[RMDB]
This 177-nucleotide RNA was probed chemically with 2A3 and DMS. The reactions ran in a buffer of 150 mM KOAc, 10 mM MgCl2 and 150 mM bicine (pH 8.5), at 24 C. For DMS the reverse transcriptase was MarathonRT.
RNA sequence: GGGAACGACUCGAGUAGAGUCGAAAAGCCAAUAGUGGGUGAGCCUUGUGUAGCUGAGUCUGCUGUUACAUGGUUUAAGUUUGAGUGGGUUGGGUUAUAGUCCAUGUGGCGAUUCUUGAUCGGUUCAGGACGAAGUUUCGUUCGCGGAACUUCGUCCAAAAGAAACAACAACAACAAC
Reactivity to 2A3 in 0.01 (KOAc 150mM, MgCl2 10mM, bicine 150mM(pH8.5), 24C), signal-to-noise 1, nucleotides 027 to 126: g220c050c010a090a250u300a210g060u240g070g010g010u080g030a010g000c000c000u070u070g150u020g000u030a040g000c000u000g030a110g100u030c070u080g090c000u060g170u070u080a030c020a000u080g000g010u000u020u030a060a120g030u000u130u060g000a010g000u150g000g050g100u040u080g040g000g000u000u010a240u120a000g010u000c020c040a030u010g000u090g030g000c000g060a010u210u000c020u030u090g070a030u040c030g000g130u050u200c000a000
Reactivity to DMS in 0.01 (KOAc 150mM, MgCl2 10mM, bicine 150mM(pH8.5), 24C), signal-to-noise 2, nucleotides 027 to 126: g010c010c030a110a120u020a090g000u050g000g010g000u000g000a060g010c060c040u010u000g000u010g000u020a080g010c030u000g020a100g000u040c050u020g020c010u000g010u010u000a010c000a020u020g000g000u000u010u000a070a140g000u000u020u000g010a050g020u020g000g000g000u000u010g020g000g000u030u030a080u020a030g010u010c020c010a020u000g040u040g000g010c040g000a060u010u000c030u020u000g000a090u030c070g020g000u000u010c070a100